[RMDB]
RNA sequence: GGGAACGACUCGAGUAGAGUCGAAAAGAUAUGGAUACGUCAUAGGGAGCUGCUGGUCGGAAACGACCAGACAGCUUUGAUCUAUACGUAUCCUAAGUCAAAACAACAGGAGUUCGCUCCUGUUGAAGAACCAGUAACAGUUCGCUGUUACUGGUUCAAAAGAAACAACAACAACAAC
Reactivity to 2A3 in 0.01 (KOAc 150mM, MgCl2 10mM, bicine 150mM(pH8.5), 24C), signal-to-noise 2, nucleotides 027 to 126: g010a010u030a000u080g010g010a000u010a010c000g000u040c210a020u060a040g140g110g120a140g100c020u020g020c010u000g000g000u000c000g000g040a040a000a040c000g010a000c000c010a000g020a020c030a000g030c000u020u000u050g010a000u000c000u000a020u000a040c000g000u000a000u030c000c010u010a010a000g000u000c020a000a030a130a280c000a000a020c000a000g010g000a030g040u090u170c240g160c190u000c000c010u020g000u010u000g000a030a020
Reactivity to DMS in 0.01 (KOAc 150mM, MgCl2 10mM, bicine 150mM(pH8.5), 24C), signal-to-noise 3, nucleotides 027 to 126: g010a040u000a240u000g000g010a010u000a010c000g030u000c300a010u010a000g010g010g000a070g030c000u000g000c020u000g010g020u000c000g030g010a030a030a120c000g030a010c000c000a010g000a100c000a020g000c000u000u000u010g000a110u020c010u000a030u000a020c000g010u000a000u010c010c010u000a000a080g000u000c040a150a080a200a250c010a010a010c000a020g000g000a020g030u010u010c210g010c010u000c000c000u000g000u010u000g000a050a090

Source information
Structure probing data (2A3 and DMS) for a 177-nucleotide construct. 2A3 adducts were read by reverse transcription with SuperScript II with manganese. The RNA was probed in 150 mM KOAc, 10 mM MgCl2 and 150 mM bicine (pH 8.5) at 24 C. Reactivities are given for positions 27 through 126.